Structure probing data (2A3 and DMS) for a 177-nucleotide construct. Conditions: 150 mM KOAc, 10 mM MgCl2 and 150 mM bicine (pH 8.5), 24 C. Reactivities are given for positions 27 through 126. It was measured as part of the RMDB libraries RFM100 and RFMREP.
RNA sequence: GGGAACGACUCGAGUAGAGUCGAAAAGCUGAAAUUCUUGGACCGUCGUAAGACUACCUUAAGCGAAAGCAUUUGCCAAAGAUGUUUUCAUUAAUCAAGAACGAAAGUUAGAGGUUCGAAGGCGAUCAAUUGAUUAUCUCUUCGGAGAUAAUCAAUUAAAAGAAACAACAACAACAAC
Reactivity to 2A3 in 0.01 (KOAc 150mM, MgCl2 10mM, bicine 150mM(pH8.5), 24C), signal-to-noise 8, nucleotides 027 to 126: g020c020u020g030a030a060a080u080u020c010u010u030g040g010a030c030c020g020u030c000g050u100a080a010g010a040c040u070a060c040c010u060u080a050a010g070c030g090a010a000a000g000c000a010u030u060u130g140c100c090a100a100a030g010a010u010g010u000u010u010u010c010a020u030u090a040a060u120c070a050a050g060a100a030c050g030a130a020a000g000u030u050a060g010a030g100g000u040u040c040g030a050a030g020g010c020g030a050u040c040
Reactivity to DMS in 0.01 (KOAc 150mM, MgCl2 10mM, bicine 150mM(pH8.5), 24C), signal-to-noise 9, nucleotides 027 to 126: g020c030u010g010a080a110a100u000u000c010u000u010g000g010a060c110c100g000u000c010g000u040a110a160g000a050c070u030a090c160c150u000u000a040a050g010c130g000a010a000a010g010c000a010u010u000u000g010c170c220a070a100a040g010a010u000g000u000u000u000u000c000a070u010u010a040a060u020c100a050a080g010a020a020c050g010a100a080a090g000u000u000a070g010a120g000g000u000u000c020g010a070a180g000g010c070g010a060u010c100